This 177-nucleotide RNA was probed chemically with DMS and 2A3. For 2A3 the reverse transcriptase was SuperScript II with manganese. Conditions: 150 mM KOAc, 10 mM MgCl2 and 150 mM bicine (pH 8.5), 24 C.

RNA sequence: GGGAACGACUCGAGUAGAGUCGAAAAGAAAAUGGUAGGAACGGUUCCAAAGGAGCCGAAGUUCAAAGCUAAGGCAUCGAUCUAAAAUCGUAUCAAAAAGGUAACGAGCUUGGCAAUGAACAAAAAAUCAUAUGCAUAAGUUCGCUUAUGCAUAUGAAAAAGAAACAACAACAACAAC
Reactivity to DMS in 0.01 (KOAc 150mM, MgCl2 10mM, bicine 150mM(pH8.5), 24C), signal-to-noise 5, nucleotides 027 to 126: g000a080a070a070a060u010g000g020u010a070g010g010a130a180c020g000g010u000u000c010c010a100a150a170g030g010a020g000c000c010g010a020a050g010u000u000c020a000a040a300g000c020u000a020a030g020g000c030a080u010c020g010a050u000c060u010a040a040a100a070u000c140g020u000a080u010c120a040a060a070a060a060g010g000u010a030a110c020g000a090g010c010u000u000g010g000c010a010a270u000g000a010a010c040a010a010a050a040a060a090
Reactivity to 2A3 in 0.01 (KOAc 150mM, MgCl2 10mM, bicine 150mM(pH8.5), 24C), signal-to-noise 4, nucleotides 027 to 126: g100a000a120a000a040u150g050g040u100a090g060g080a110a040c010g010g030u000u000c030c000a190a150a150g020g000a000g000c010c010g020a030a010g000u000u000c010a020a000a000g000c000u020a010a020g100g020c020a100u040c010g020a020u000c010u130a020a080a100a120u130c100g060u120a040u190c110a010a080a110a060a020g020g010u020a090a030c010g000a010g010c020u020u000g000g010c000a010a050u000g010a000a000c030a000a070a000a000a000a040